[RMDB]
RNA sequence: GGGAACGACUCGAGUAGAGUCGAAAAGGUCUGAUCUUCGGAUCAGACCAACUCUGAUUCCCUAUAGCUGCGUAUCUUGGCUAAGACGGAUAGGCGUUGCCACUCAGGGGGGUUUCGACCCCCCUAAUUGGAAAUCACAAUUCGUUGUGAUUUCCAAAAAAGAAACAACAACAACAAC
Reactivity to DMS in 0.01 (KOAc 150mM, MgCl2 10mM, bicine 150mM(pH8.5), 24C), signal-to-noise 4, nucleotides 027 to 126: g000g000u000c000u000g000a020u000c000u000u000c210g030g000a010u000c000a010g010a000c000c020a010a030c120u000c060u000g000a220u010u000c000c000c020u010a150u000a070g020c020u010g040c120g020u010a050u020c100u000u000g010g010c050u000a060a080g000a130c180g000g000a040u000a060g000g010c020g010u000u000g010c010c040a120c270u010c100a040g000g000g000g000g010g010u000u010u010c150g000a030c000c000c000c000c000c000u000a000a030